[RMDB]
RNA sequence: GGGAACGACUCGAGUAGAGUCGAAAAGAAAUUAUUCACAGGCACGGAGACAAGCGAAGCUGAAUUGGAGCAAUAUUAUAAAAUGUAUCAAGAGCUCGAUAAUCGUGAAGCAACUGUUAAGGAAGUCUCUAACCAAUUCGUUCGCGAAUUGGUUAGAAAAAGAAACAACAACAACAAC
Reactivity to DMS in 0.01 (KOAc 150mM, MgCl2 10mM, bicine 150mM(pH8.5), 24C), signal-to-noise 3, nucleotides 027 to 126: g000a090a080a090u040u010a040u020u000c010a050c110a080g030g000c000a040c020g000g000a060g000a080c100a100a110g000c040g010a050a100g010c030u030g030a070a120u030u010g000g010a030g000c030a060a050u020a110u030u020a130u020a050a060a110a070u000g020u000a040u010c100a100a100g020a100g010c020u020c020g000a020u010a040a080u020c060g000u000g050a110a150g010c110a060a060c110u010g020u000u000a060a080g010g020a060a110g000u030c080
Reactivity to 2A3 in 0.01 (KOAc 150mM, MgCl2 10mM, bicine 150mM(pH8.5), 24C), signal-to-noise 3, nucleotides 027 to 126: g080a000a030a020u280u180a050u040u040c040a030c000a040g070g020c000a010c060g050g010a020g020a040c070a020a090g020c000g090a090a010g010c030u040g060a100a060u040u060g050g020a010g030c020a000a020u080a010u300u070a060u170a080a090a080a030u090g070u070a120u070c050a010a110g010a000g120c000u010c030g020a040u120a110a160u120c040g020u040g080a080a000g050c030a020a080c040u080g030u160u030a000a060g070g010a050a040g030u010c010

Chemical mapping of a 177-nucleotide RNA with DMS and 2A3.
The reactions ran in a buffer of 150 mM KOAc, 10 mM MgCl2 and 150 mM bicine (pH 8.5), at 24 C.
For DMS the reverse transcriptase was MarathonRT.
For DMS, 3,902 sequencing reads were counted.
Source: RMDB library OK1LIB, as collected in RNAgym.